[RMDB]
RNA sequence: GGGAACGACUCGAGUAGAGUCGAAAAAAAAUAGUGAUGAAUCGCCUGAAUCGUCUGAUAACGAGUCGGAUGAAUUUAUUCCCCCCUCGUCACGUCGCUCCGUUAUUAAAAGAGGCAGAAGCGCUCACCUCAUAGGUAUGUUCGCAUACCUAUGAGGAAAAGAAACAACAACAACAAC
Reactivity to 2A3 in 0.01 (KOAc 150mM, MgCl2 10mM, bicine 150mM(pH8.5), 24C), signal-to-noise 2, nucleotides 027 to 126: a000a000a000a000u150a040g020u040g010a040u040g020a010a050u050c030g000c060c020u020g050a040a010u020c010g050u010c010u070g060a050u050a120a050c030g000a000g050u050c020g050g010a030u050g060a170a280u070u240u260a150u140u170c030c000c000c000c000c010u000c000g010u000c000a020c060g050u030c020g000c010u000c020c030g000u000u020a020u050u070a060a050a000a040g020a020g010g000c020a010g090a120a000g040c090g050c060u000c010a050
Reactivity to DMS in 0.01 (KOAc 150mM, MgCl2 10mM, bicine 150mM(pH8.5), 24C), signal-to-noise 3, nucleotides 027 to 126: a080a080a060a100u010a080g020u010g000a030u000g020a070a060u000c040g020c030c000u010g020a050a030u000c000g000u000c070u010g010a110u000a090a050c070g020a030g000u000c010g000g000a030u000g010a070a020u000u000u010a120u010u000c010c010c000c010c010c010u000c030g020u000c060a050c090g010u000c040g010c030u000c040c030g010u020u000a060u000u010a040a050a080a090g010a030g000g010c040a080g030a100a110g000c030g010c100u000c060a130